[RMDB]
RNA sequence: GGGAACGACUCGAGUAGAGUCGAAAAUCACGUCCAUCAUAGCAUAGGAUUGGGGAGCUAGGAGUCAGAGUGGGUGUGACUCGUGUGUGUUUGGCAGCUGCUCGUUGAGAACCUUGAAAGUCGAGGCGUAAGUCUCACCGUUCGCGGUGAGACUUACAAAAGAAACAACAACAACAAC
Reactivity to DMS in 0.01 (KOAc 150mM, MgCl2 10mM, bicine 150mM(pH8.5), 24C), signal-to-noise 1, nucleotides 027 to 126: u010c080a050c100g010u000c000c010a030u010c060a120u010a090g010c080a100u010a130g030g030a110u000u000g030g000g010g000a090g030c030u000a070g010g000a070g010u020c030a050g010a080g030u000g000g040g010u000g030u000g010a080c040u000c060g030u010g050u000g030u000g010u000u000u000g000g030c060a080g000c050u010g030c050u000c010g010u010u020g000a130g000a040a110c020c030u040u000g010a060a110a100g000u020c020g030a060g010g020c240
This 177-nucleotide RNA was probed chemically with DMS. The data come from the RNA Mapping Database (RMDB), library OK2TRN. The RNA was probed in 150 mM KOAc, 10 mM MgCl2 and 150 mM bicine (pH 8.5) at 24 C. Reactivities are given for positions 27 through 126.